[RMDB]
RNA sequence: GGGAACGACUCGAGUAGAGUCGAAAAUAGGGCAAACGUUGUCUUGGCCGCGAAUUAUUGCUGACUUAGCCGUUAUCAAAGCAAAGUCAGGUGUUAAAGAGUUGUGGCUGGAGUUAGGGCGCUUUGCCGUGGCCGAGUGUGGUUAUUAUGUCGUACCUAUCCGUAGUGGAUUCGUCCACUACGGAUAAAAAGAAACAACAACAACAAC
Reactivity to DMS in 0.01 (KOAc 150mM, MgCl2 10mM, bicine 150mM(pH8.5), 24C), signal-to-noise 2, nucleotides 027 to 156: u000a110g000g040g020c010a050a050a150c080g000u010u010g030u020c030u000u010g030g000c000c000g040c010g000a080a120u000u020a100u000u010g000c010u010g000a040c010u000u000a300g050c000c000g010u010u000a150u010c180a040a130a080g000c010a160a060a130g010u000c020a020g030g040u000g060u020u000a080a060a160g010a150g030u000u000g030u010g000g000c040u010g030g010a120g020u010u000a110g010g020g020c030g020c100u000u000u000g020c000c020g040u000g000g020c000c010g020a050g020u020g010u000g010g000u010u010a070u010u010a090u020g000u000c030g030u000a130c150c100
Reactivity to 2A3 in 0.01 (KOAc 150mM, MgCl2 10mM, bicine 150mM(pH8.5), 24C), signal-to-noise 3, nucleotides 027 to 156: u140a040g000g010g000c000a060a050a040c100g010u050u070g060u160c020u080u110g010g000c050c000g000c030g080a060a020u110u070a070u140u180g050c000u000g010a000c000u040u020a080g000c000c000g120u110u110a160u230c100a130a030a000g000c000a030a020a010g010u010c010a020g000g060u050g080u060u160a080a090a010g060a020g040u090u180g030u040g040g020c020u060g080g010a030g050u100u120a090g030g030g020c040g020c050u020u030u030g040c040c000g000u080g000g020c050c030g030a100g030u050g020u090g010g030u060u070a070u120u060a080u150g070u040c020g030u050a090c010c010